[RMDB]
RNA sequence: GGGAACGACUCGAGUAGAGUCGAAAAUGGUUCCGCAUGGAAGGGCCAUCGCUCAAAGGAUAAAAGGUACUCCGGGGAUAACAGGCUGAUCCCUCCCAAGAGCUCACAUCGACGGAGUGGUUUGGCAUUAUAAGCUGUGGUUCGCCACAGCUUAUAAAAAAGAAACAACAACAACAAC
Reactivity to DMS in 0.01 (KOAc 150mM, MgCl2 10mM, bicine 150mM(pH8.5), 24C), signal-to-noise 7, nucleotides 027 to 126: u000g010g010u000u010c010c040g000c110a160u020g010g010a090a100g000g020g000c020c030a050u000c090g010c020u010c050a090a120a120g000g000a090u020a060a030a070a100g000g000u010a050c040u000c020c030g000g000g000g010a070u020a070a090c160a120g000g020c020u000g000a030u010c030c010c000u010c020c020c010a050a270g000a070g000c100u010c160a110c200a110u010c040g000a300c300g010g000a020g000u020g010g000u000u010u000g000g000c090a140
Reactivity to 2A3 in 0.01 (KOAc 150mM, MgCl2 10mM, bicine 150mM(pH8.5), 24C), signal-to-noise 3, nucleotides 027 to 126: u160g000g030u180u240c010c010g040c070a150u110g080g130a110a060g060g020g000c000c010a040u020c050g000c000u030c080a070a060a070g060g010a000u130a100a090a040a010g060g050u070a050c020u010c050c010g000g020g000g020a000u010a140a080c040a060g130g000c010u020g030a040u040c010c000c000u000c000c000c010a030a010g010a010g030c030u060c060a130c020a080u030c020g080a040c010g060g010a010g020u060g000g020u000u040u020g030g010c000a010